[RMDB]
RNA sequence: GGGAACGACUCGAGUAGAGUCGAAAAGAUAUGGAAUCGAAAGUGGCUAUGAAGUGGCGGUCGGAAACGACCGUCCAUGGAGCCACUCUCGAUUCCUAAGUCAAAGCGAUAUCUUCGGAUAUCGCAACACCUGGUAAUGGUUCGCCAUUACCAGGUGAAAAGAAACAACAACAACAAC
Reactivity to DMS in 0.01 (KOAc 150mM, MgCl2 10mM, bicine 150mM(pH8.5), 24C), signal-to-noise 3, nucleotides 027 to 126: g000a040u000a300u020g000g000a010a000u000c000g010a020a020a030g040u000g000g010c000u010a250u000g030a150a220g020u000g010g020c000g000g000u010c000g010g000a070a110a140c010g000a010c000c000g000u010c030c010a000u010g000g000a030g020c010c000a010c000u000c030u000c000g000a010u000u000c000c000u000a010a070g010u000c040a090a190a190g020c000g010a010u000a020u000c000u000u030c270g030g010a010u000a020u000c000g020c000a040a070
Reactivity to 2A3 in 0.01 (KOAc 150mM, MgCl2 10mM, bicine 150mM(pH8.5), 24C), signal-to-noise 2, nucleotides 027 to 126: g030a000u060a040u160g000g000a010a020u010c040g000a000a030a010g020u020g000g010c020u100a200u300g040a050a040g000u010g020g000c000g000g000u010c010g000g040a040a060a090c020g010a020c000c000g080u030c000c000a000u000g010g000a010g010c000c000a000c000u030c000u000c000g000a000u010u010c000c000u000a020a000g020u010c050a100a150a010g000c010g000a010u020a000u030c020u040u070c230g070g000a000u000a000u010c020g000c000a000a000
Chemical mapping of a 177-nucleotide RNA with DMS and 2A3.
The 2A3 profile rests on 6,244 reads.
Values cover nucleotides 27 to 126.